RNA sequence: GGGAACGACUCGAGUAGAGUCGAAAAAGCGAGUCUUCCAACACGAAAGUAUUGGAAGUUCUAUUUGAUGCAGGCGGCACUGUCAUGUCUGACAUUAUCAUUUACGUGGCAUCUUCACAAAUGAAAGCAUGACUUGUGUUUUCGAACACAAGUCAUGAAAAGAAACAACAACAACAAC
Reactivity to DMS in 0.01 (KOAc 150mM, MgCl2 10mM, bicine 150mM(pH8.5), 24C), signal-to-noise 4, nucleotides 027 to 126: a120g040c150g000a080g030u040c000u000u000c000c000a000a000c120a020c000g000a170a110a180g020u020a090u000u000g000g000a040a000g000u000u000c030u000a110u010u000u000g000a060u000g000c040a040g010g000c040g010g000c130a100c130u000g000u020c020a050u050g020u010c100u020g030a100c120a050u020u000a080u030c120a040u020u020u030a070c090g010u000g000g000c100a040u010c080u020u000c030a010c090a010a050a050u050g000a060a070a090g020
Reactivity to 2A3 in 0.01 (KOAc 150mM, MgCl2 10mM, bicine 150mM(pH8.5), 24C), signal-to-noise 9, nucleotides 027 to 126: a010g130c080g020a020g050u010c000u000u000c000c000a010a000c020a010c030g090a140a050a030g040u040a030u020u010g000g000a000a000g000u030u010c030u020a130u060u110u130g040a040u030g010c020a020g040g000c010g020g040c050a040c250u120g030u110c080a090u060g050u010c060u040g050a100c030a040u060u140a090u160c050a040u020u070u150a070c080g020u030g050g010c030a080u040c020u120u120c050a050c020a050a100a050u180g060a110a050a020g040